The record gives the reactivity of an RNA of 177 nucleotides to DMS and 2A3. Values cover nucleotides 27 to 126. 2A3 adducts were read by reverse transcription with SuperScript II with manganese.
[RMDB]
RNA sequence: GGGAACGACUCGAGUAGAGUCGAAAAACUCCGAAGUUCGCUUCGGAGUAAAAUGGGCCCGAAGUCGCACAUGAAAGGGUCAAGUCGCCAUAAAUAAAAUAAAAAUCGAGAGCUUCGGCUCUCGAAACGGUCUUAAAGUAUUCGUACUUUAAGACCGAAAAGAAACAACAACAACAAC
Reactivity to DMS in 0.01 (KOAc 150mM, MgCl2 10mM, bicine 150mM(pH8.5), 24C), signal-to-noise 2, nucleotides 027 to 126: a080c000u010c000c010g010a040a000g020u010u010c180g060c020u000u000c000g000g000a030g010u030a000a010a140a070u010g000g000g030c010c000c020g000a130a120g010u010c100g010c060a100c180a050u010g020a040a080a210g000g010g040u010c020a020a040g000u000c020g000c020c010a090u010a080a120a070u020a070a060a090a090u020a010a070a050a100a100u010c010g020a020g010a010g000c000u020u030c160g030g010c000u000c000u010c010g010a000a030a080
Reactivity to 2A3 in 0.01 (KOAc 150mM, MgCl2 10mM, bicine 150mM(pH8.5), 24C), signal-to-noise 2, nucleotides 027 to 126: a000c000u000c010c020g000a010a020g010u050u170c170g060c090u000u020c000g000g020a010g000u000a000a000a000a000u020g000g020g000c000c050c000g020a030a010g100u110c040g020c100a050c030a220u140g080a030a080a000g010g000g010u020c010a000a020g090u070c020g030c150c010a020u090a090a060a010u070a000a080a080a010u180a000a120a020a040a010u010c000g010a000g000a000g000c000u070u080c210g080g010c010u000c000u000c000g010a000a000a000